RNA sequence: GGGAACGACUCGAGUAGAGUCGAAAAACCAAGUCUGGGGGCCGAUGAGGGUUGGCUCAAAGUAGGGUUUUGACGUGAAAACUCAAGCUGUGACCCCAAAACGAUGGAGGUAAAUGAGAAUCCUCCUAAAACUAUGGACACUUCGGUGUCCAUAGAAGAAAUCGAAAGGGUUCGCCCUUUCGAUUUCAAAAGAAACAACAACAACAAC
Reactivity to 2A3 in 0.01 (KOAc 150mM, MgCl2 10mM, bicine 150mM(pH8.5), 24C), signal-to-noise 1, nucleotides 027 to 156: a000c000c000a020a000g110u010c020u230g200g000g000g010g000c040c010g030a000u110g080a120g030g060g000u030u040g010g000c000u000c010a000a070a000g050u090a020g040g080g020u020u010u000u100g070a030c090g000u060g070a040a000a000a040c030u020c060a050a050g070c010u010g030u120g130a130c010c020c010c040a040a100a000a000c080g060a030u110g000g020a020g000g030u020a150a180a260u180g030a090g040a040a070u000c000c010u000c000c000u000a000a050a000a000c000u000a000u000g000g000a000c000a000c010u040u110c260g050g000u000g020u020c000c000a000u000a000g000a000a020